RNA sequence: GGGAACGACUCGAGUAGAGUCGAAAAUCGGUGAUCCUGCCUCUCCUUGUCGGUGAAUCCUCCCCUGAGAGGCCUCUUCCUAGGUCCGGAAUCUACCUCCAUCUGGUCCGUUCGGGCCCUCUUCGCCGGGGGAGCCCCCUCUCCAUCCUUAUCCUUCGUAAGAAUAUACGUUCGCGUAUAUUCUUACAAAAGAAACAACAACAACAAC
Reactivity to 2A3 in 0.01 (KOAc 150mM, MgCl2 10mM, bicine 150mM(pH8.5), 24C), signal-to-noise 2, nucleotides 027 to 156: u100c010g030g000u030g030a080u080c000c010u050g000c020c000u060c010u060c020c020u060u080g140u150c100g010g060u140g130a140a190u170c030c020u010c030c020c010c000u050g000a050g020a060g040g010c010c010u090c030u100u090c030c040u050a070g010g010u000c020c010g010g030a050a070u080c030u160a150c040c010u000c060c030a100u060c020u030g000g000u000c000c020g050u110u150c080g000g000g000c020c000c010u020c020u110u060c030g050c040c040g000g010g000g000g000a000g000c000c000c030c020c000u000c010u000c020c010a090u040c000c050u060u140a100u120c020c020u080u170c040